Notes: Structure probing data (2A3 and DMS) for a 177-nucleotide construct. High 2A3 reactivity points to a flexible backbone, as in loops and unpaired stretches. DMS (dimethyl sulfate) methylates the pairing face of unpaired adenines and cytosines. The reactions ran in a buffer of 150 mM KOAc, 10 mM MgCl2 and 150 mM bicine (pH 8.5), at 24 C.
RNA sequence: GGGAACGACUCGAGUAGAGUCGAAAAGCCCUAGCCCGGUCUUCGAAGCUUCCUUUGGCUACUACCCGGUGGAAACAACUGAAGCUUCAACGCCUUUUUUUCCUAUCUUCUUUAGCACCGGGCUAGGCCAUUAGGUAAGGUUCGCCUUACCUAAUGGAAAAGAAACAACAACAACAAC
Reactivity to 2A3 in 0.01 (KOAc 150mM, MgCl2 10mM, bicine 150mM(pH8.5), 24C), signal-to-noise 4, nucleotides 027 to 126: g020c010c000c000u000a000g000c000c000c000g020g020u030c050u190u170c290g000a010a010g000c000u010u000c000c010u040u010u040g060g020c020u030a010c000u090a080c010c030c040g020g000u010g000g070a180a300a060c000a040a000c030u010g000a000a010g010c000u030u010c020a030a020c040g100c010c010u070u070u030u050u020u090u120c040c000u090a190u180c080u270u040c030u090u300u140a050g030c050a020c000c000g000g000g000c000u000a000g000g000
Reactivity to DMS in 0.01 (KOAc 150mM, MgCl2 10mM, bicine 150mM(pH8.5), 24C), signal-to-noise 4, nucleotides 027 to 126: g030c140c000c000u000a010g000c000c010c030g010g000u000c080u000u010c180g000a020a040g000c030u010u000c010c040u010u000u000g010g010c020u000a020c020u000a140c050c060c050g000g010u000g010g000a090a090a070c010a020a030c030u000g010a040a020g010c000u000u000c010a080a100c210g000c030c020u000u000u000u010u010u010u000c010c010u000a060u010c120u010u010c090u010u000u000a080g010c110a060c000c010g000g010g010c010u000a000g000g000

The DMS profile rests on 5,022 reads. For DMS the reverse transcriptase was MarathonRT.